Annotation: Chemical mapping of a 177-nucleotide RNA with 2A3. The RNA was probed in 150 mM KOAc, 10 mM MgCl2 and 150 mM bicine (pH 8.5) at 24 C.
[RMDB]
RNA sequence: GGGAACGACUCGAGUAGAGUCGAAAACGAAUUGCCUCGGUCCGGGGGUCUAUACCGAACAGCCAACGUCACAUAUCGGGGCAUCACCAUAGGGAAGGUCACCGGCGUCGAACCAACCGAGCGGGGCGUUGACAAGCCCCUUCGGGGGCUUGUCAACAAAAGAAACAACAACAACAAC
Reactivity to 2A3 in 0.01 (KOAc 150mM, MgCl2 10mM, bicine 150mM(pH8.5), 24C), signal-to-noise 1, nucleotides 027 to 126: c030g030a080a120u100u120g060c000c030u010c060g020g100u120c010c000g000g000g000g010g040u000c000u030a150u130a100c050c000g080a110a050c010a160g000c000c000a140a200c030g040u060c000a150c020a300u130a090u240c000g020g000g010g020c000a000u120c070a070c050c010a000u250a090g000g000g000a030a000g030g000u000c000a000c040c080g000g020c030g040u020c000g030a040a050c000c000a110a010c150c020g010a000g120c000g000g000g000g000c030